The data come from the RNA Mapping Database (RMDB), library OK2TRN. The record gives the reactivity of an RNA of 177 nucleotides to 2A3 and DMS. The reactions ran in a buffer of 150 mM KOAc, 10 mM MgCl2 and 150 mM bicine (pH 8.5), at 24 C. The 2A3 profile rests on 31,331 reads.

RNA sequence: GGGAACGACUCGAGUAGAGUCGAAAACAACAGUACAGGCAACAUGGGCUACGCUGAGCCCCUGCUCUCCUGGAAGUCUGGUAUUUUGGUAUUUUGGCAGGUGCCAGGCAGAGGGUGCCUAGGACCACGAUAGAAACAUGUUCGCAUGUUUCUAUCGAAAAGAAACAACAACAACAAC
Reactivity to 2A3 in 0.01 (KOAc 150mM, MgCl2 10mM, bicine 150mM(pH8.5), 24C), signal-to-noise 9, nucleotides 027 to 126: c020a010a010c020a030g050u130a050c020a030g000g010c020a050a010c000a130u040g010g000g000c010u090a050c100g090c260u200g090a010g010c000c000c000c010u030g040c000u010c010u010c010c000u050g080g080a060a040g040u000c020u020g030g030u050a060u020u090u070u040g190g050u110a180u060u180u080u150g160g020c020a010g020g010u010g020c010c000a000g010g010c010a010g020a010g040g020g020u040g010c000c000u030a060g020g050a010c010c020a040
Reactivity to DMS in 0.01 (KOAc 150mM, MgCl2 10mM, bicine 150mM(pH8.5), 24C), signal-to-noise 9, nucleotides 027 to 126: c070a100a130c130a060g010u000a130c070a040g010g010c260a120a240c040a020u010g000g000g010c000u010a090c210g020c170u010g010a050g000c010c000c000c040u000g010c030u000c100u010c010c020u000g010g010a190a090g010u000c020u000g000g010u000a020u000u000u000u010g020g010u000a100u000u000u010u000g010g010c030a030g010g010u000g000c010c000a010g000g010c040a070g000a180g010g010g010u010g020c010c010u010a090g010g000a090c050c080a210